[RMDB]
RNA sequence: GGGAACGACUCGAGUAGAGUCGAAAAACUACAAAGAAUUAGGUUUAGUCAUGAAUAUGGAUGUUAGUCUCCAUAGACAUAGGCUCUCUCUUAAGGAGUUGAUGAUGUAUGCCGCUGAUCCAGCCAUGAUAAUGACACUCUUCGGAGUGUCAUUAUCAAAAGAAACAACAACAACAAC
Reactivity to DMS in 0.01 (KOAc 150mM, MgCl2 10mM, bicine 150mM(pH8.5), 24C), signal-to-noise 1, nucleotides 027 to 126: a060c070u010a100c140a100a000a100g000a170a120u000u040a070g010g010u000u010u000a080g020u010c010a040u000g010a040a180u000a010u000g010g000a030u030g000u010u000a190g020u030c080u000c020c010a020u000a010g000a260c030a040u000a050g040g010c000u000c040u000c040u010c050u010u010a040a040g020g020a040g020u010u000g000a030u010g000a020u000g010u000a040u010g030c000c020g000c060u030g030a110u010c050c040a060g030c040c090a110u030